[RMDB]
RNA sequence: GGGAACGACUCGAGUAGAGUCGAAAACUUGAUUACACGCUCGCAUUCAUGGUCACUUCCGAAGCGCUUUAGUGCCUUCCGUCCCCAAACCGCCAACAGCCAGGGCGGCCUCUCCCCGCGGUUUGUCAACCUGAAGCCAUUUCGAUGGCUUCAGGUUAAAAGAAACAACAACAACAAC
Reactivity to 2A3 in 0.01 (KOAc 150mM, MgCl2 10mM, bicine 150mM(pH8.5), 24C), signal-to-noise 2, nucleotides 027 to 126: c000u040u060g090a060u180u100a020c040a030c060g040c040u010c020g000c010a020u070u070c040a030u140g040g000u090c070a030c060u100u000c030c000g050a030a010g040c000g040c040u090u100u210a070g060u070g010c000c000u030u010c010c000g070u010c000c000c000c000a010a050a010c030c000g020c000c050a060a040c040a060g020c010c020a020g000g040g040c060g000g000c010c010u040c000u000c010c030c000c000g030c000g000g000u000u030u020g000u010c000
Reactivity to DMS in 0.01 (KOAc 150mM, MgCl2 10mM, bicine 150mM(pH8.5), 24C), signal-to-noise 1, nucleotides 027 to 126: c040u000u030g030a110u090u000a020c050a060c070g000c020u000c070g120c060a100u000u010c090a180u030g030g020u000c030a000c090u000u000c060c020g010a130a140g020c030g050c050u000u020u000a090g030u000g020c040c000u000u000c000c030g030u000c000c010c000c060a000a090a070c020c030g000c020c070a040a130c090a040g040c050c020a130g000g000g030c060g000g020c040c030u000c000u050c000c010c050c110g000c060g010g000u010u000u030g020u000c130